Structure probing data (2A3 and DMS) for a 177-nucleotide construct.
Values cover nucleotides 27 to 126.
The reactions ran in a buffer of 150 mM KOAc, 10 mM MgCl2 and 150 mM bicine (pH 8.5), at 24 C.
Source: RMDB library M2PK90, as collected in RNAgym.
RNA sequence: GGGAACGACUCGAGUAGAGUCGAAAAACAAAGAGAAAACUCACAUACAGUCAGUCGCGUGUAAGGAGUGGUCAACCUUACGACUGUUUGAAAUAAUGCCACAAAAGAUCGAAAGAUCAAAAAAAAACUAUCUCUACGUAUUCGUACGUAGAGAUAGAAAAGAAACAACAACAACAAC
Reactivity to 2A3 in 0.01 (KOAc 150mM, MgCl2 10mM, bicine 150mM(pH8.5), 24C), signal-to-noise 3, nucleotides 027 to 126: a010c040a000a130a010g110a000g070a040a110a100a090c030u050c040a020c000a040u100a010c000a000g030u020c000a010g070u110c030g070c050g130u150g010u060a020a010g000g010a040g000u010g020g010u070c030a090a070c010c000u000u010a000c020g000a010c000u000g010u020u040u080g050a030a020a010u110a040a040u070g020c000c000a040c020a050a080a020a020g000a010u010c020g040a020a030a050g000a000u000c000a060a030a020a000a010a000a000a010a040
Reactivity to DMS in 0.01 (KOAc 150mM, MgCl2 10mM, bicine 150mM(pH8.5), 24C), signal-to-noise 3, nucleotides 027 to 126: a070c040a020a070a050g000a060g010a090a060a100a070c060u000c020a120c040a020u000a020c020a020g000u010c010a100g020u000c110g010c090g020u010g000u010a000a000g000g010a070g000u000g010g000u000c030a110a010c010c000u000u010a010c010g010a020c000u000g030u000u000u030g010a030a100a070u010a030a070u010g000c010c040a080c120a090a040a050a100g000a010u000c000g010a060a110a200g000a010u010c010a000a000a000a010a030a020a060a090a110